[RMDB]
RNA sequence: GGGAACGACUCGAGUAGAGUCGAAAAGCAUCAACGACGGUCCUGCCAUGAGACCGUAACGAGGACAUGUCGCCUCGAAUGGCGUCGGGGAGCCGGCAGCUUACCCCAAGGAUGAGCGCCUAAUGCCUAUACCCGAUUCGCUUCGGCGAAUCGGGAACAGAAAUUUGAUGUUCGCAUCAAAUUUCUGAAAAGAAACAACAACAACAAC
Reactivity to 2A3 in 0.01 (KOAc 150mM, MgCl2 10mM, bicine 150mM(pH8.5), 24C), signal-to-noise 4, nucleotides 027 to 156: g040c010a050u090c040a060a100c040g110a000c000g000g000u000c010c020u070g180c040c020a140u100g020a060g000a140c020c000g000u020a020a020c010g000a000g000g040a020c020a130u240g040u170c150g010c000c000u000c020g050a030a070u090g010g000c000g010u050c060g000g010g010g000a020g030c040c040g080g010c030a020g010c020u070u180a220c010c020c000c020a030a030g090g000a070u100g040a010g050c010g020c000c000u070a080a040u110g020c010c020u120a120u080a140c000c010c000g000a000u000u000c000g000c000u030u020c180g120g000c000g000a000a000u000c000g000g000g000a000a000
Reactivity to DMS in 0.01 (KOAc 150mM, MgCl2 10mM, bicine 150mM(pH8.5), 24C), signal-to-noise 1, nucleotides 027 to 156: g020c040a120u010c060a160a100c060g010a030c040g030g010u000c000c000u000g000c060c240a230u010g040a120g020a080c010c000g090u010a040a000c070g010a140g010g010a090c040a120u000g020u010c010g040c000c010u010c000g000a100a050u030g010g040c040g020u000c010g000g000g000g020a210g010c030c100g000g040c060a160g060c010u000u000a100c010c010c000c110a140a100g010g010a040u000g010a140g000c070g000c020c020u000a060a030u000g010c000c000u010a230u010a100c020c000c010g000a040u000u030c000g010c030u000u010c300g020g040c000g000a010a010u000c000g000g020g000a010a000
Chemical mapping of a 207-nucleotide RNA with 2A3 and DMS.
The DMS profile rests on 1,824 reads.
DMS adducts were read by reverse transcription with MarathonRT.